[RMDB]
RNA sequence: GGGAACGACUCGAGUAGAGUCGAAAACUUCGUCGGUGAUCCUGCCUCUCCUCGUCGGUGAAUCCUCCCCUGAGAGGCCUCUUCCUAGGCCCGGAGUCUACCUCCAUCUGGUCCGUCCGGGCCCUCUUCGCCGGGGGAGCCCCCUCUCCAUCCUUCUCCUAACAUGUAUCUUCGGAUACAUGUUAGGAAAAGAAACAACAACAACAAC
Reactivity to 2A3 in 0.01 (KOAc 150mM, MgCl2 10mM, bicine 150mM(pH8.5), 24C), signal-to-noise 1, nucleotides 027 to 156: c000u090u040c040g270u080c040g030g100u060g040a100u040c040c070u070g000c030c000u040c000u040c020c010u050c010g110u010c060g000g000u110g080a080a100u150c020c030u000c010c000c010c000u090g060a160g000a000g130g030c000c040u110c030u220u040c010c030u060a030g000g000c020c000c000g000g000a020g030u000c050u080a030c010c010u160c010c010a300u180c210u100g000g000u000c090c020g090u040c000c000g020g000g000c000c000c000u020c020u100u050c010g080c010c020g000g000g020g000g000a040g020c000c000c000c000c000u060c010u050c000c000a110u050c010c010u000u040c000u000